[RMDB]
RNA sequence: GGGAACGACUCGAGUAGAGUCGAAAAAGGGAAUAGAAGAUGGGGUGAAUGAUGUUUCUGACCCACAGACCGUUGGGAUGCUUUUGCUGUCACUUUCCCAUCAUGCUGCAUGAGGCAUGACAGCAGCUGUGCCAUUGAUGCCCCAGAAUAGAAUCAACACCUAAUGAUGCUUCGGCAUCAUUAGGUGAAAAGAAACAACAACAACAAC
Reactivity to DMS in 0.01 (KOAc 150mM, MgCl2 10mM, bicine 150mM(pH8.5), 24C), signal-to-noise 2, nucleotides 027 to 156: a070g030g000g000a100a020u000a080g010a080a070g000a160u000g000g020g050g000u000g000a070a120u010g000a160u000g000u000u000u010c000u010g000a200c040c020c040a070c050a140g000a070c110c060g050u000u000g000g000g000a130u000g000c030u020u000u000u000g010c000u000g080u000c030a070c090u000u000u000c020c000c010a100u000c030a060u000g030c060u000g000c080a080u010g030a090g010g000c300a030u000g000a000c010a010g050c020a030g010c060u000g020u010g030c050c030a090u010u000g000a110u000g040c010c000c000c030a050g010a040a190u000a040g010a100a080u000c040a050a160
Reactivity to 2A3 in 0.01 (KOAc 150mM, MgCl2 10mM, bicine 150mM(pH8.5), 24C), signal-to-noise 3, nucleotides 027 to 156: a010g080g030g020a080a050u080a100g060a110a010g000a150u120g000g010g040g020u070g050a060a130u100g050a030u020g060u010u090u020c050u010g080a060c010c070c000a050c000a040g170a090c030c070g050u090u040g000g020g020a030u090g010c000u040u040u090u120g010c000u050g000u060c000a050c090u070u060u000c020c000c000a010u040c000a000u040g010c040u070g010c030a160u150g070a080g030g000c030a020u010g010a020c010a010g000c000a010g020c020u040g030u060g100c020c000a050u050u070g000a030u150g070c000c030c050c000a000g040a040a060u180a040g060a050a060u090c030a030a070